[RMDB]
RNA sequence: GGGAACGACUCGAGUAGAGUCGAAAAGAACGGUUCGAGUUAUGAAUUGACGAGUCAUGAAUUAUAGGUCUGCCGGUAAUUACAUGCUCUGAUAGUGAUUAGUUCGAAUAGUUUCACCGGCGGUGUCGAAUGACGCGGGUUCAGCGUCUCAUAUCACUCGAAGGUAAGGAUUCGUCCUUACCUUCGAAAAAGAAACAACAACAACAAC
Reactivity to 2A3 in 0.01 (KOAc 150mM, MgCl2 10mM, bicine 150mM(pH8.5), 24C), signal-to-noise 4, nucleotides 027 to 156: g010a020a010c030g030g000u000u000c010g000a000g020u030u030a020u030g050a050a060u020u030g000a010c020g000a010g030u100c020a020u010g010a010a010u040u020a010u050a080g030g040u100c140u190g260c080c010g020g010u000a010a000u010u020a070c010a020u010g000c000u000c010u010g040a020u030a050g180u040g030a030u020u000a000g020u010u010c000g000a010a010u030a030g000u010u020u060c120a130c040c000g080g030c060g000g030u070g040u110c080g080a170a140u170g010a000c000g000c000g070g060g000u130u190c060a020g030c010g040u010c010u000c020a090u160a040u180c050a020c060
Reactivity to DMS in 0.01 (KOAc 150mM, MgCl2 10mM, bicine 150mM(pH8.5), 24C), signal-to-noise 3, nucleotides 027 to 156: g020a030a040c000g010g080u000u000c030g000a070g030u000u000a020u000g000a150a070u010u000g000a300c300g000a030g010u010c010a030u000g000a160a040u000u000a010u000a060g020g020u010c180u000g010c000c010g040g080u000a000a010u000u000a070c030a020u000g010c000u000c010u000g010a200u010a030g000u000g000a190u000u000a030g000u000u010c010g020a040a060u000a090g000u000u000u010c020a170c030c030g070g010c050g040g020u000g000u000c040g010a110a110u000g010a020c050g000c030g020g050g030u000u000c090a090g040c020g000u000c010u000c050a040u000a100u000c070a160c120